[RMDB]
RNA sequence: GGGAACGACUCGAGUAGAGUCGAAAAGAUGAGAGUUCAACUGAUACUGUUUAGUUGGUUUGGAACAGUAUUCAAACGUUGUGCCUAAGUACACAACGUGAAGAGUGAGCUCUUCACAACUCUCAGAGAUAGGUUUGAUCUUCGGGUCAGAUCUAUCAAAAGAAACAACAACAACAAC
Reactivity to 2A3 in 0.01 (KOAc 150mM, MgCl2 10mM, bicine 150mM(pH8.5), 24C), signal-to-noise 9, nucleotides 027 to 126: g150a090u080g000a000g000a000g000u030u070c070a120a060c090u050g000a000u000a000c000u000g010u010u000u020a060g030u040u060g070g050u070u050u080g030g000a000a000c000a000g000u010a010u090u120c030a070a040a020c030g000u000u000g000u010g000c010c070u190a210a050g100u220a050c000a000c000a000a010c010g010u030g010a030a010g050a010g040u110g070a050g040c000u000c000u030u040c010a010c000a010a050c010u000c000u000c020a010g020a000
Reactivity to DMS in 0.01 (KOAc 150mM, MgCl2 10mM, bicine 150mM(pH8.5), 24C), signal-to-noise 9, nucleotides 027 to 126: g010a130u010g000a000g000a010g010u000u010c100a080a090c140u010g010a020u000a000c000u000g000u000u000u000a160g010u010u000g000g010u040u010u010g000g010a000a010c000a010g000u000a010u020u010c090a060a110a040c050g010u000u000g010u000g010c300c080u030a080a140g020u050a300c000a000c000a000a000c000g000u000g000a050a040g000a060g010u020g010a110g010c010u000c000u010u010c020a050c160a060a040c070u000c010u010c010a060g010a140

This 177-nucleotide RNA was probed chemically with 2A3 and DMS. The RNA was probed in 150 mM KOAc, 10 mM MgCl2 and 150 mM bicine (pH 8.5) at 24 C. For 2A3, 53,845 sequencing reads were counted. For DMS, 104,566 sequencing reads were counted.